[RMDB]
RNA sequence: GGGAACGACUCGAGUAGAGUCGAAAACAACCAAGAGUGCACUAUGUGUUACGGGGGCGGGGUUCACGUAAACGCCAUAUCGGGGCACACGAAAAGCGACGACCCCGGGACCUCCGCGAGCUGCCCGUGCGUGACCUCGUGCAGCAUCAAGAGGGGACACUCUAAACCCAUUCGUGGGUUUAGAGUGAAAAGAAACAACAACAACAAC
Reactivity to 2A3 in 0.01 (KOAc 150mM, MgCl2 10mM, bicine 150mM(pH8.5), 24C), signal-to-noise 1, nucleotides 027 to 156: c080a040a030c060c040a080a050g110a020g110u030g000c000a020c040u160a140u220g080u010g020u110u120a040c030g020g000g000g000g000c010g010g040g000g000u040u100c040a000c040g000u080a070a100a070c110g000c020c040a040u070a100u140c030g030g000g060g030c020a000c000a020c110g040a250a020a000a000g110c040g170a230c000g020a040c030c020c010c050g010g010g000a080c020c000u000c000c000g000c040g020a020g000c020u010g020c000c090c000g010u020g020c090g130u160g080a120c020c000u050c000g040u020g000c000a000g020c010a110u050c020a060a000g050a190g010g050g010g000a000